[RMDB]
RNA sequence: GGGAACGACUCGAGUAGAGUCGAAAAGCGGUGGUGUAGCCGUGCGGCUCGUGAAGGAACGCCGCGGGACCGCUCCUUUGCCCGAAGCCUUUCCGGAGCUUGCUGCCAAAGGAACCGCAUCGCCGCCCUGGCUAUGCUCAUUCGUGAGCAUAGCCAGAAAAGAAACAACAACAACAAC
Reactivity to 2A3 in 0.01 (KOAc 150mM, MgCl2 10mM, bicine 150mM(pH8.5), 24C), signal-to-noise 3, nucleotides 027 to 126: g000c020g000g000u000g020g000u020g000u040a050g010c030c010g050u080g000c030g000g000c000u000c030g030u050g030a060a020g030g040a030a010c050g030c010c010g000c000g010g000g000a130c030c020g040c070u100c020c020u060u060u120g040c000c000c020g000a030a000g000c010c000u070u160u100c040c000g060g000a050g010c000u010u050g040c030u010g040c030c030a100a130a130g050g000a030a050c070c030g000c000a000u020c000g000c000c000g010c000c000
Reactivity to DMS in 0.01 (KOAc 150mM, MgCl2 10mM, bicine 150mM(pH8.5), 24C), signal-to-noise 2, nucleotides 027 to 126: g000c020g000g060u000g000g020u000g030u000a080g000c020c010g020u050g030c060g000g000c000u030c130g000u060g010a300a170g040g000a040a060c300g000c020c060g030c050g000g000g000a070c120c000g030c010u030c020c030u000u000u010g000c040c040c010g010a050a040g050c050c090u000u000u000c020c030g000g000a190g030c030u040u010g060c050u000g030c080c140a000a010a010g000g000a050a030c150c170g000c000a000u000c000g000c000c000g000c000c080